Overview
An RNA of 177 nucleotides, treated with DMS and 2A3 and read out base by base. The reactions ran in a buffer of 150 mM KOAc, 10 mM MgCl2 and 150 mM bicine (pH 8.5), at 24 C. Source: RMDB library OK2TST, as collected in RNAgym.
RNA sequence: GGGAACGACUCGAGUAGAGUCGAAAACUGAACCUGUACGUAAUGGAUUUGGCUUCUGGUCAGAUCCGCCAGGUGACUGAUGGUCGCAGUAACAAUACCGAACCGACCUGGUUCCCGGAUAGCCAGAUCGACUAUUUCCGUUCGCGGAAAUAGUCGAAAAAGAAACAACAACAACAAC
Reactivity to DMS in 0.01 (KOAc 150mM, MgCl2 10mM, bicine 150mM(pH8.5), 24C), signal-to-noise 2, nucleotides 027 to 126: c080u020g030a170a040c020c010u000g020u010a080c210g040u000a080a080u020g040g010a010u000u000u000g010g020c000u000u000c230u010g000g030u000c080a030g000a030u020c020c020g010c140c010a020g010g020u000g000a140c080u000g000a100u010g010g030u000c030g040c050a060g010u000a060a090c150a090a070u000a100c110c010g000a080a110c140c010g000a040c000c010u000g010g000u000u000c030c010c000g000g010a060u010a060g020c050c050a050g000a120
Reactivity to 2A3 in 0.01 (KOAc 150mM, MgCl2 10mM, bicine 150mM(pH8.5), 24C), signal-to-noise 2, nucleotides 027 to 126: c030u020g020a030a070c000c000u020g080u210a020c100g050u060a140a120u170g050g010a000u000u000u040g010g030c000u070u130c150u300g030g000u020c040a020g020a020u020c000c000g000c010c000a000g060g000u040g050a090c050u080g060a080u110g030g010u010c000g000c090a030g100u100a200a100c070a170a230u090a190c080c000g030a040a040c020c000g040a000c020c000u010g060g000u000u030c020c000c000g080g050a070u140a000g070c070c060a000g000a070